[RMDB]
RNA sequence: GGGAACGACUCGAGUAGAGUCGAAAAUCCCAUAGGUUGCCGAAUCCGAAAGGUAAGGAGGAACCGCUUUUUGGGGUUAAUCUGCAGUGAAGCUGCAGUAGGGAUACCUUCUGUCCCGCACCCGACAGCUAACUCCAGAGGCAAUAAAGGAAGGAGAAGCGGUAGUAAUAUUCGUAUUACUACCGCUAAAAGAAACAACAACAACAAC
Reactivity to DMS in 0.01 (KOAc 150mM, MgCl2 10mM, bicine 150mM(pH8.5), 24C), signal-to-noise 2, nucleotides 027 to 156: u000c010c000c000a120u000a050g030g050u000u000g100c000c050g020a210a300u000c020c020g010a080a130a180g000g000u010a020a060g000g000a150g000g020a160a060c080c020g040c070u000u000u000u000u000g010g010g040g010u000u000a070a080u000c030u010g000c010a040g050u000g000a160a240g020c010u000g000c000a030g000u010a040g000g000g030a060u000a040c040c100u000u000c040u000g010u010c210c000c010g010c070a070c040c000c010g000a170c150a060g000c020u010a120a140c010u010c020c030a110g000a240g020g020c080a130a100u000a050a080a090g010g000a060a070g020g030a230g010a270
Reactivity to 2A3 in 0.01 (KOAc 150mM, MgCl2 10mM, bicine 150mM(pH8.5), 24C), signal-to-noise 2, nucleotides 027 to 156: u010c020c000c010a010u080a020g100g000u030u010g020c020c000g030a040a050u000c010c000g060a110a120a010g000g000u040a040a040g000g030a010g030g000a030a110c060c040g000c050u170u100u000u080u120g030g010g000g000u020u010a040a040u070c000u000g000c000a010g000u020g200a200a040g140c010u000g030c000a000g010u000a010g000g000g000a000u040a050c000c000u020u000c020u030g020u000c000c000c000g000c010a040c010c000c010g000a080c060a030g000c000u020a030a010c010u000c020c000a000g010a050g140g000c010a000a010u100a070a060a000g010g010a020a020g010g020a050g020a120